[RMDB]
RNA sequence: GGGAACGACUCGAGUAGAGUCGAAAAGAUAUGGACGAUCAUGGCAAGGUUACGGUCGGAAACGACCGCGGACUGAUGACCCAUAUCGUCCUAAGUCAAAAGUUUUGGAGGUUCGCCUCCAAAACAACUUUAAGAGGGUGUUCGCACCCUCUUAAAGAAAAGAAACAACAACAACAAC
Reactivity to 2A3 in 0.01 (KOAc 150mM, MgCl2 10mM, bicine 150mM(pH8.5), 24C), signal-to-noise 1, nucleotides 027 to 126: g010a010u020a010u040g000g000a010c000g010a010u030c080a020u160g020g050c030a140a220g000g000u020u030a020c000g000g000u000c000g000g030a030a000a000c000g020a000c000c000g000c030g070g000a000c000u020g110a300u050g030a050c030c010c010a010u040a010u020c000g010u030c000c000u000a000a000g010u010c020a000a100a140a200g010u020u020u030u010g020g010a010g020g040u010u150c200g100c070c030u000c010c010a020a000a000a000c000a000a010
Reactivity to DMS in 0.01 (KOAc 150mM, MgCl2 10mM, bicine 150mM(pH8.5), 24C), signal-to-noise 3, nucleotides 027 to 126: g010a020u000a030u010g000g000a020c020g010a010u000c300a020u000g000g000c030a080a020g010g030u000u000a040c010g000g010u000c000g010g000a030a020a030c000g000a020c010c000g010c040g000g030a000c000u000g000a080u010g010a040c300c000c010a020u000a010u010c000g000u000c000c000u000a000a070g000u000c020a110a110a130a190g010u000u000u000u000g000g000a050g020g000u000u010c300g020c010c000u000c000c000a010a000a010a000c000a050a090
The data come from the RNA Mapping Database (RMDB), library TTRDES. An RNA of 177 nucleotides, treated with 2A3 and DMS and read out base by base. Conditions: 150 mM KOAc, 10 mM MgCl2 and 150 mM bicine (pH 8.5), 24 C. Reactivities are rounded to 0.1 and cut off at 0 and 3. For DMS, 4,289 sequencing reads were counted. The 2A3 profile rests on 3,140 reads. DMS adducts were read by reverse transcription with MarathonRT.